Background
Structure probing data (2A3) for a 207-nucleotide construct. 2A3 adducts were read by reverse transcription with SuperScript II with manganese. The reactions ran in a buffer of 150 mM KOAc, 10 mM MgCl2 and 150 mM bicine (pH 8.5), at 24 C. Values cover nucleotides 27 to 156.
RNA sequence: GGGAACGACUCGAGUAGAGUCGAAAAGAAAGAAAGAAAGAACUCUGUAAAGUGAGGGAUUGCCUGGACCAGGUCGGCGGGCCUGCUCCAGUUUCCUUCGCUCUUCUCAACGGGCAGACCGCCACAAAAAACGCGUGGCUGUUCGCAGCCACGCGAACAGUCCUAUUAUGUUCGCAUAAUAGGACUGAAAAGAAACAACAACAACAAC
Reactivity to 2A3 in 0.01 (KOAc 150mM, MgCl2 10mM, bicine 150mM(pH8.5), 24C), signal-to-noise 1, nucleotides 027 to 156: g040a020a080a040g040a020a160a010g020a030a100a010g030a030a050c040u050c030u110g050u220a170a100a060g010u000g000a000g020g000g000a030u030u090g090c020c000u000g000g000a000c040c000a000g040g010u030c020g040g010c010g050g020g000c010c010u000g000c000u010c000c000a000g000u010u020u000c020c000u020u020c000g000c010u040c000u070u000c040u020c020a110a040c010g030g040g000c070a040g060a120c010c050g010c010c040a080c030a040a210a000a000a010a000c010g020c010g000u000g000g000c010u000g020u050u110c190g000c040a000g060c000c000a010c000g000c000g000a000a000